[RMDB]
RNA sequence: GGGAACGACUCGAGUAGAGUCGAAAAACAAACAGUUACAAAUACAACUGAAGAUGAUAAAGAUGCCGAUGGUGGCGAAGUUGACGUAACAAUUACGGAUCAUGAUGAUUUCACACUUGAUAACGGACGUUAUUCACUAGUUCGCUAGUGAAUAACGAAAAGAAACAACAACAACAAC
Reactivity to DMS in 0.01 (KOAc 150mM, MgCl2 10mM, bicine 150mM(pH8.5), 24C), signal-to-noise 6, nucleotides 027 to 126: a080c070a080a120a090c110a040g000u000u010a080c110a070a100a140u050a170c130a040a030c030u020g000a130a110g010a120u010g000a130u020a050a070a110g000a130u010g020c050c060g000a080u030g020g020u000g000g020c040g000a040a010g000u000u000g000a080c160g020u010a010a080c100a090a080u040u010a080c010g000g000a060u000c030a020u020g000a100u010g000a160u010u010u020c130a100c030a020c020u000u010g010a020u000a100a140c030g010g010a230
Reactivity to 2A3 in 0.01 (KOAc 150mM, MgCl2 10mM, bicine 150mM(pH8.5), 24C), signal-to-noise 8, nucleotides 027 to 126: a010c090a020a080a010c030a030g010u010u030a040c090a030a160a060u230a090c060a030a000c010u060g050a140a050g080a130u260g040a040u140a130a190a020g120a060u130g030c000c020g070a080u250g090g120u140g020g000c040g020a040a020g030u030u030g030a030c050g020u030a060a020c020a070a050u140u090a020c020g010g020a030u050c030a030u070g100a060u040g030a050u080u150u150c100a060c000a030c070u060u080g050a070u090a170a040c010g020g040a000